[RMDB]
Chemical mapping of a 207-nucleotide RNA with DMS and 2A3. The RNA was probed in 150 mM KOAc, 10 mM MgCl2 and 150 mM bicine (pH 8.5) at 24 C.

RNA sequence: GGGAACGACUCGAGUAGAGUCGAAAAUCAUCAAGCAGUAGGCUUAGGCCAAUUGCUUGGUGGUGAAAGUAGAGGGAAGGUAGCACUUCGACGCCUCUAAGUACGCUGUGGGAGUAGUGCUUAAAUCAAAAGCACAGCGACUUCGGUCGCUGUGCAACAAUAAUAUUUUGUUCGCAAAAUAUUAUUGAAAAGAAACAACAACAACAAC
Reactivity to DMS in 0.01 (KOAc 150mM, MgCl2 10mM, bicine 150mM(pH8.5), 24C), signal-to-noise 2, nucleotides 027 to 156: u000c010a020u000c010a000a040g030c000a040g060u000a090g050g010c000u000u000a170g080g030c000c000a110a030u010u000g000c000u000u000g030g040u000g010g010u010g000a100a060a080g020u010a080g000a080g040g030g000a090a120g000g020u000a070g060c050a130c030u000u000c030g030a050c050g000c030c010u000c050u000a040a140g010u010a060c050g010c030u000g020u000g000g020g020a140g020u000a090g020u010g000c010u000u000a040a080a150u010c060a040a100a100a210g000c000a020c020a000g000c030g050a040c020u000u010c300g040g010u000c000g010c030u000g060u000g000c000a010a030
Reactivity to 2A3 in 0.01 (KOAc 150mM, MgCl2 10mM, bicine 150mM(pH8.5), 24C), signal-to-noise 4, nucleotides 027 to 156: u020c000a000u010c000a010a000g000c000a010g000u090a030g010g000c020u140u080a150g160g000c010c000a030a020u030u000g000c000u000u000g000g000u000g000g010u020g020a100a090a010g100u110a020g030a030g020g050g010a050a020g040g020u060a020g030c050a020c070u020u020c030g080a040c040g090c010c010u030c030u050a060a020g030u030a010c060g000c090u080g020u160g080g040g010a050g020u110a020g010u030g000c010u060u100a090a090a080u160c070a060a040a040a030g000c000a010c000a000g040c000g000a010c000u040u060c160g080g000u000c000g000c010u010g000u000g010c000a000a000
The data come from the RNA Mapping Database (RMDB), library M2RFPK.